Structure probing data (2A3 and DMS) for a 170-nucleotide construct. The data come from the RNA Mapping Database (RMDB), library 15KLIB. Reactivities are given for positions 27 through 129.

RNA sequence: GGGAACGACUCGAGUAGAGUCGAAAAUGUUCCACCUACGGGAACGGUGCCGAGUGAGGCUUAUCCCGGGGGGUAGCGCUCCGUGCCCUUCCAUAGCACUGGGGUCCCGGGCCCCCUCCCAGGAAUGUGAUCUCUAUGUUCGCAUAGAGAAAAAGAAACAACAACAACAAC
Reactivity to 2A3 in 0.01 (KOAc 150mM, MgCl2 10mM, bicine 150mM(pH8.5), 24C), signal-to-noise 9, nucleotides 027 to 129: u150g000u010u020c010c000a070c030c040u090a080c080g030g000g030a050a040c060g030g040u070g020c010c020g030a060g070u180g050a070g040g000c000u050u080a120u090c000c000c000g000g000g000g000g000g000u080a080g060c060g000c050u040c030c020g010u020g010c010c000c000u110u080c060c030a120u150a050g030c050a020c100u100g000g000g000g030u040c010c020c000g020g040g010c000c000c000c000c000u020c000c000c010a030g030g080a100a070u150g050u110g080a070
Reactivity to DMS in 0.01 (KOAc 150mM, MgCl2 10mM, bicine 150mM(pH8.5), 24C), signal-to-noise 9, nucleotides 027 to 129: u070g000u020u030c000c000a100c040c060u020a120c130g010g000g010a040a060c090g020g020u020g020c000c070g000a110g010u070g000a120g010g000c040u000u060a060u000c010c020c020g010g010g000g020g020g020u030a060g020c190g010c030u010c010c020g020u000g000c000c020c030u030u030c090c070a080u030a120g010c060a060c050u040g030g000g020g010u040c050c030c020g000g000g000c010c000c010c000c010u010c010c000c040a110g010g010a080a060u040g030u040g020a160